[RMDB]
RNA sequence: GGGAACGACUCGAGUAGAGUCGAAAAUGUUAUCCAUCAAAGCAAUAAGUUCCAUAUUUGCAAACCCCGUUUUGAGAGUGUGGAAUUUCAGGUCCAAGGGUUUGCCAUUCUUUGGUGAGGACUAUAGCAAGUUCGGCAAAUUCGUUUGCCGAACUUGAAAAGAAACAACAACAACAAC
Reactivity to DMS in 0.01 (KOAc 150mM, MgCl2 10mM, bicine 150mM(pH8.5), 24C), signal-to-noise 1, nucleotides 027 to 126: u020g000u010u000a100u010c040c010a060u000c030a040a050a020g020c160a150a050u000a090a090g010u000u000c000c010a050u010a040u000u010u000g000c030a020a000a010c030c130c050c120g000u000u010u010u010g000a110g000a050g140u000g030u010g000g000a050a030u000u010u000c090a100g000g010u010c060c070a140a100g010g020g020u000u000u010g010c050c170a060u000u000c100u000u010u000g000g020u000g000a150g000g000a030c100u000a170u000a090g000
Chemical mapping of a 177-nucleotide RNA with DMS. The data come from the RNA Mapping Database (RMDB), library OK2TRN.